[RMDB]
RNA sequence: GGGAACGACUCGAGUAGAGUCGAAAAAAUGGCACUGCAGAGCUGAUGGGCCAUGUACCCAUCCAAAAUGAGAUCCCAUCUUGCACACUGUGCUAAUUUGAGAUUCUCAUGCCUCCUACUUGGAGAGACCGCAUGCCCAGCUUCGGCUGGGCAUGAACUAAUCCGAUAUAUUCGUAUAUCGGAUUAGAAAAGAAACAACAACAACAAC
Reactivity to 2A3 in 0.01 (KOAc 150mM, MgCl2 10mM, bicine 150mM(pH8.5), 24C), signal-to-noise 5, nucleotides 027 to 156: a000a010u080g010g000c070a040c150u090g020c060a060g030a070g180c100u120g030a090u050g010g020g000c030c030a060u090g040u080a080c020c000c000a020u060c030c030a080a070a030a060u040g000a010g000a030u010c000c010c010a000u010c010u010u060g000c010a010c020a040c120u210g010u010g030c040u090a030a070u010u000u030g040a040g010a030u300u020c000u000c010a020u060g040c010c000u010c000c010u080a240c100u100u140g010g000a010g000a020g020a050c030c090g030c050a000u000g000c000c000c000a000g000c000u040u080c180g100g000c010u000g010g020g010c000a000u010g010a000a000
Reactivity to DMS in 0.01 (KOAc 150mM, MgCl2 10mM, bicine 150mM(pH8.5), 24C), signal-to-noise 3, nucleotides 027 to 156: a060a050u000g010g020c020a110c030u000g010c040a120g020a160g030c070u010g030a090u010g020g030g020c010c010a110u000g030u010a050c000c000c010a060u010c020c070a070a060a100a050u000g010a040g010a080u000c000c010c000a020u000c100u000u000g020c010a040c020a210c150u010g040u000g020c000u010a010a030u000u000u000g010a050g000a050u000u000c000u000c000a040u000g020c050c000u010c020c000u010a100c110u000u010g010g010a100g010a150g020a150c040c050g000c020a060u000g000c000c000c000a020g010c000u000u000c300g070g000c010u010g010g000g000c010a000u000g000a030a150
Conditions: 150 mM KOAc, 10 mM MgCl2 and 150 mM bicine (pH 8.5), 24 C. Chemical mapping of a 207-nucleotide RNA with 2A3 and DMS. Reactivities are given for positions 27 through 156.